[RMDB]
RNA sequence: GGGAACGACUCGAGUAGAGUCGAAAACGAUCGUGCGCGUCAGGCGCGCGCAGUACCUCAGUACUCGGAUCUAUGAUCCGCGAGCGCGGAUCGGCCCGACGCGAUCGACGGCCCUGGAUCGAUCCGACCUCUGCUGCUAAUUCGUUAGCAGCAGAGGAAAAGAAACAACAACAACAAC
Reactivity to DMS in 0.01 (KOAc 150mM, MgCl2 10mM, bicine 150mM(pH8.5), 24C), signal-to-noise 2, nucleotides 027 to 126: c020g030a120u000c010g030u000g000c020g010c000g020u000c020a060g010g010c000g000c020g000c000g000c050a030g010u000a010c010c250u000c300a140g010u000a010c040u000c010g030g000a010u000c000u010a120u010g010a030u000c000c000g020c210g010a080g000c040g030c000g000g010a130u010c110g010g000c010c000c020g010a040c030g000c030g000a100u000c010g000a030c030g000g000c010c000c010u000g000g010a090u000c050g000a090u000c000c030g000a270
Reactivity to 2A3 in 0.01 (KOAc 150mM, MgCl2 10mM, bicine 150mM(pH8.5), 24C), signal-to-noise 2, nucleotides 027 to 126: c020g050a300u070c010g040u200g130c040g020c000g010u010c020a030g000g060c020g020c010g000c000g000c070a000g010u010a010c030c050u210c120a020g010u020a020c000u010c000g000g010a020u030c040u140a170u300g010a000u020c010c020g030c120g090a130g070c060g000c000g010g200a210u090c030g150g000c000c000c020g010a010c020g010c010g030a060u040c000g010a020c040g030g000c030c000c000u070g130g020a100u080c060g030a070u000c010c020g060a040